[RMDB]
RNA sequence: GGGAACGACUCGAGUAGAGUCGAAAAGGGGUCGCUCGGGAGUGCUGGAGCUAAGGUACUGAAGCCUCCACGGUACCUAGCGUUGAAAGCACUUCUCUAGCGUGGCGACGGAGGCACCCAAAAUGCAUGUGGCUGUAUUCGUACAGCCACAUGCAAAGGUUAUAUCUCACUUCGGUGAGAUAUAACCAAAAGAAACAACAACAACAAC
Reactivity to 2A3 in 0.01 (KOAc 150mM, MgCl2 10mM, bicine 150mM(pH8.5), 24C), signal-to-noise 1, nucleotides 027 to 156: g080g000g010g000u020c040g000c070u110c120g070g000g000a000g000u010g010c000u030g030g030a030g000c010u040a170a130g030g000u010a000c000u020g010a060a020g000c000c000u000c000c000a050c010g020g000u000a000c000c000u000a010g010c020g090u240u060g000a040a020a000g000c050a000c000u000u020c000u000c010u020a040g040c050g190u110g050g000c030g000a020c010g000g000a000g000g010c030a040c000c000c020a020a100a010a020u090g010c030a000u010g000u000g020g000c000u010g020u010a010u070u100c300g000u090a000c000a000g020c010c010a000c000a000u000g000c000a000a000a000

An RNA of 207 nucleotides, treated with 2A3 and read out base by base. Conditions: 150 mM KOAc, 10 mM MgCl2 and 150 mM bicine (pH 8.5), 24 C.